[RMDB]
RNA sequence: GGGAACGACUCGAGUAGAGUCGAAAAGGUAAUGGACGACGGCGGCGUGUGGCGAACAGGGAUACCGGUAGUCAGUGUCUGGAACAUCCCAAGGGGCGGCGGAGAUAGCACCCCGACACGUUAAGGCAAAACUUCGCACGGUUCGCCGUGCGAAGAACAUAAAGUGAAAGUUCGCUUUCACUUUAUGAAAAGAAACAACAACAACAAC
Reactivity to 2A3 in 0.01 (KOAc 150mM, MgCl2 10mM, bicine 150mM(pH8.5), 24C), signal-to-noise 3, nucleotides 027 to 156: g060g010u100a090a030u100g040g040a020c040g000a000c020g030g060c030g020g020c030g000u060g020u020g020g000c050g000a040a020c070a090g000g020g000a010u060a070c020c050g040g000u040a050g010u050c080a020g030u030g050u110c010u030g000g010a040a040c020a060u020c060c000c040a090a090g000g000g000g010c140g030g020c020g030g030a060g010a070u100a050g030c010a040c010c000c000c000g020a000c020a000c040g030u050u040a080a010g030g030c040a010a000a090a110c010u000u000c000g000c010a000c000g010g050u030u060c190g010c040c000g000u020g000c010g000a000a000g000a000a000
Reactivity to DMS in 0.01 (KOAc 150mM, MgCl2 10mM, bicine 150mM(pH8.5), 24C), signal-to-noise 1, nucleotides 027 to 156: g000g060u000a080a050u030g010g030a050c000g000a080c030g020g000c030g010g020c050g050u050g020u000g020g030c030g000a100a080c060a140g000g000g000a070u010a070c010c010g010g030u000a100g000u000c070a110g020u000g000u000c020u000g010g000a090a160c090a110u000c010c000c010a090a190g010g000g040g040c040g040g010c000g020g000a110g010a140u010a070g000c040a100c020c000c000c020g010a050c050a050c050g020u000u010a050a080g020g000c050a040a050a050a100c010u000u000c030g020c000a020c010g010g000u000u010c300g040c030c000g060u010g010c020g000a000a000g000a060a140